[RMDB]
RNA sequence: GGGAACGACUCGAGUAGAGUCGAAAAACGAGUCCGUACGCGGACUCGAAGGGCCCCAGAUGACCAAGGGGCCCAAACCUACCACUCAUUAGAUGCAUGGAAAUCACUAGGUGAUACGUCACCUAGAACACGCUUUUAAGCUUCGGCUUAAAAGCAAUCUAUAAUUCGUCUUCGGACGAAUUAUAGAAAAAGAAACAACAACAACAAC
Reactivity to 2A3 in 0.01 (KOAc 150mM, MgCl2 10mM, bicine 150mM(pH8.5), 24C), signal-to-noise 4, nucleotides 027 to 156: a010c000g010a000g000u020c010c010g020u040a030c240g000c010g090g000a000c000u000c000g000a010a010g000g000g000c020c000c000c020a080g120a300u220g100a070c080c050a150a090g010g000g000g020c000c000c010a010a000a010c000c000u030a020c010c040a060c010u070c010a080u100u180a110g060a140u140g060c120a050u070g090g160a060a090a060u180c070a080c090u000a000g030g000u000g020a010u010a040c230g040u000c010a000c000c000u000a000g000a000a010c050a010c090g000c000u000u010u000u000a000a000g000c000u010u110c210g080g000c000u000u000a000a000a000a010g010c000a000a000
Reactivity to DMS in 0.01 (KOAc 150mM, MgCl2 10mM, bicine 150mM(pH8.5), 24C), signal-to-noise 1, nucleotides 027 to 156: a060c000g030a020g040u000c000c000g080u000a070c300g030c110g030g000a010c000u010c010g040a030a100g020g020g040c020c000c000c020a080g010a200u000g010a140c100c020a100a170g020g030g050g030c000c000c030a010a000a030c040c050u010a130c070c000a060c050u000c060a110u000u010a100g030a090u000g000c010a190u000g020g000a130a120a120u000c060a290c010u000a000g000g040u000g000a070u000a080c290g030u030c010a010c000c000u000a000g010a010a080c100a140c070g030c000u000u000u000u000a020a020g000c010u000u000c300g060g040c010u000u000a010a000a010a000g000c010a000a010
An RNA of 207 nucleotides, treated with 2A3 and DMS and read out base by base. For 2A3 the reverse transcriptase was SuperScript II with manganese. The RNA was probed in 150 mM KOAc, 10 mM MgCl2 and 150 mM bicine (pH 8.5) at 24 C. For DMS, 2,002 sequencing reads were counted. DMS adducts were read by reverse transcription with MarathonRT.